Description: An RNA of 177 nucleotides, treated with 2A3 and read out base by base. The 2A3 profile rests on 438 reads. The RNA was probed in 150 mM KOAc, 10 mM MgCl2 and 150 mM bicine (pH 8.5) at 24 C. It was measured as part of the RMDB library OK1LIB. 2A3 is a SHAPE reagent: it acylates the 2'-hydroxyl of flexible nucleotides of all four kinds.

RNA sequence: GGGAACGACUCGAGUAGAGUCGAAAACUCGACAACCUACACAGGCCCACAUAGGUUUACGGGCGAGCGAACCUGAGAGAAAGCAGGGUUACCGUCCUCAGGAGCCCAAAUAACGGUACUUUGCUGGUGCAUGGGGCUCAUUCGUGAGCCCCAUGCAAAAAGAAACAACAACAACAAC
Reactivity to 2A3 in 0.01 (KOAc 150mM, MgCl2 10mM, bicine 150mM(pH8.5), 24C), signal-to-noise 1, nucleotides 027 to 126: c000u030c040g050a020c020a030a020c000c020u060a060c220a030c040a140g110g070c050c120c000a050c000a040u070a050g060g020u050u030u030a010c080g000g000g000c000g080a000g040c070g100a110a110c000c000u000g020a000g070a060g070a200a080a000g210c030a020g010g000g090u000u060a010c000c000g140u010c020c020u020c020a060g050g060a090g000c020c000c000a010a120a040u180a050a000c050g000g010u060a050c020u040u020u000g050c050u080g010g060